The data come from the RNA Mapping Database (RMDB), library OK3TST. This 207-nucleotide RNA was probed chemically with 2A3.
RNA sequence: GGGAACGACUCGAGUAGAGUCGAAAACUGCUAUGUCUCCUCCGAAGGCGCCGCCAAGCUACUUCGCGUAAUAGAUGGCCGUGACGUCAGCGUGCUAGUCGUUGUAGACAAGCACCUUGCUAACGAAGCUUUCUGCAAGCUGGUCUCGCGCCGCUACGCGAGUAAUGUGCUUCGGCACAUUACUCGCAAAAGAAACAACAACAACAAC
Reactivity to 2A3 in 0.01 (KOAc 150mM, MgCl2 10mM, bicine 150mM(pH8.5), 24C), signal-to-noise 1, nucleotides 027 to 156: c060u170g000c140u170a060u220g100u030c030u000c100c000u000c030c000g110a070a100g030g010c020g000c050c030g000c000c030a020a110g000c030u040a060c070u130u210c100g000c040g100u090a220a110u100a210g070a050u040g000g000c000c010g000u020g010a060c030g000u030c020a020g000c020g130u000g000c000u050a250g000u000c030g180u070u270g170u300a030g000a000c010a000a070g000c000a010c010c010u030u030g010c000u000a010a000c000g100a060a040g020c000u010u120u060c020u020g000c050a050a020g010c000u020g000g000u000c110u050c110g040c000g000c000c000g000c000u030a020c060

The reactions ran in a buffer of 150 mM KOAc, 10 mM MgCl2 and 150 mM bicine (pH 8.5), at 24 C.